Source information:
The record gives the reactivity of an RNA of 177 nucleotides to DMS. It was measured as part of the RMDB library OK2TRN.

RNA sequence: GGGAACGACUCGAGUAGAGUCGAAAAGGCGGGGCAGCGGGCCUCAGCCAUGGCUAAAAACCUGUUGUAACGCGGUGACCAGUCGUUGAUUGUCCGUGGCACUUUUGAUGGCCACACGAUAGUGGUCGCCAGUUACUUACUUCGGUAAGUAACUGGCAAAAGAAACAACAACAACAAC
Reactivity to DMS in 0.01 (KOAc 150mM, MgCl2 10mM, bicine 150mM(pH8.5), 24C), signal-to-noise 1, nucleotides 027 to 126: g000g040c040g000g030g000g000c030a110g020c010g000g000g020c010c040u000c300a010g040c020c070a040u000g090g010c030u010a060a090a040a130a110c020c000u020g000u000u020g010u000a060a020c090g000c060g020g000u000g020a080c080c020a100g020u000c070g010u000u000g000a100u020u020g010u010c080c100g030u000g000g030c040a080c110u000u000u030u010g000a230u000g050g010c000c000a010c020a070c130g000a060u000a150g000u000g000g000u000c000